[RMDB]
RNA sequence: GGGAACGACUCGAGUAGAGUCGAAAAGCAUCGGGUAUAGCGCUCAAUGGCGUUCUAUACGAGCAUCAGACAUUGGGGCACCGCACCGCAGAGAAAGAGUGUUUAUCCUUGCAUGGCGCAAUGACUUGUACACAUACAAAGAAAAAUCACAAGAAAAUGACUAACACCAAUUCGUUGGUGUUAGUCAAAAAGAAACAACAACAACAAC
Reactivity to DMS in 0.01 (KOAc 150mM, MgCl2 10mM, bicine 150mM(pH8.5), 24C), signal-to-noise 1, nucleotides 027 to 156: g020c020a120u000c000g080g010g010u000a080u020a030g000c060g000c020u020c060a150a240u020g000g010c000g010u000u030c020u000a090u000a060c120g000a060g090c000a100u010c030a230g070a040c000a160u000u000g000g030g000g000c010a100c150c090g020c030a190c020c090g050c040a000g000a130g020a070a110a100g020a140g010u000g000u000u000u000a280u000c020c030u020u000g000c030a060u010g030g040c050g030c040a090a160u030g000a030c230u000u020g020u000a060c020a140c030a100u000a030c030a000a040a060g000a020a040a100a090a110u020c020a050c010a020a050g000a090a030a040a110
Reactivity to 2A3 in 0.01 (KOAc 150mM, MgCl2 10mM, bicine 150mM(pH8.5), 24C), signal-to-noise 2, nucleotides 027 to 156: g020c010a080u090c080g040g000g000u040a040u110a070g000c100g000c030u070c000a130a100u150g000g000c030g000u000u020c060u140a180u040a040c020g020a040g040c010a020u090c030a000g090a130c020a030u050u050g000g000g030g010c030a060c040c040g030c040a000c000c030g070c010a110g040a020g080a040a120a000g090a040g020u020g000u020u010u030a060u070c040c030u030u080g040c010a090u040g100g000c040g000c040a000a030u090g050a080c020u060u030g000u150a040c050a000c000a010u180a110c000a000a110a000g040a020a010a010a000a030u110c080a050c000a010a050g000a060a120a080a000

An RNA of 207 nucleotides, treated with DMS and 2A3 and read out base by base. The RNA was probed in 150 mM KOAc, 10 mM MgCl2 and 150 mM bicine (pH 8.5) at 24 C. For DMS, 1,656 sequencing reads were counted. 2A3 adducts were read by reverse transcription with SuperScript II with manganese. The 2A3 profile rests on 799 reads.